[RMDB]
RNA sequence: GGGAACGACUCGAGUAGAGUCGAAAAGCGUACUACAAUUCGGGAAAGUAGAGCAACAGCCGAUGUGUAGCAAUCCCAAAUAGGAUUGUGAGGCAUCGGACAUGCUCUAUAACACGAAUUGUAUCGCAAAAGCGUCCGAACUUCGGUUCGGACGCAACAAGUAAUGCUUGUUCGCAAGCAUUACUUGAAAAGAAACAACAACAACAAC
Reactivity to DMS in 0.01 (KOAc 150mM, MgCl2 10mM, bicine 150mM(pH8.5), 24C), signal-to-noise 2, nucleotides 027 to 156: g010c000g040u010a030c060u000a030c000a010a050u000u000c000g000g010g000a050a090a280g030u010a000g010a030g030c010a030a090c110a190g000c020c010g000a000u000g010u000g000u010a300g000c000a000a010u000c010c000c020a040a190a230u000a000g020g010a030u000u000g010u000g010a230g020g000c000a010u010c000g000g010a010c070a190u000g000c000u000c000u000a000u010a070a300c080a090c010g000a020a020u000u000g000u010a010u000c030g000c010a050a080a040a060g030c000g000u010c000c000g010a000a010c020u010u010c260g020g050u000u000c000g000g000a000c000g030c000a010a020
Reactivity to 2A3 in 0.01 (KOAc 150mM, MgCl2 10mM, bicine 150mM(pH8.5), 24C), signal-to-noise 6, nucleotides 027 to 156: g020c010g040u090a030c020u000a000c010a000a000u010u000c000g010g020g050a050a190a110g060u000a000g010a000g000c000a000a120c030a140g030c000c010g010a000u010g270u030g020u060a000g010c000a000a000u030c020c030c070a140a300a110u300a090g010g000a000u000u010g010u020g040a140g130g000c000a000u000c000g000g010a000c000a010u010g000c000u000c000u000a000u030a020a020c040a010c010g000a000a000u000u000g000u000a010u260c010g030c010a000a040a010a100g000c000g000u000c000c000g000a000a000c000u040u120c270g080g000u000u000c000g000g000a000c000g000c000a000a000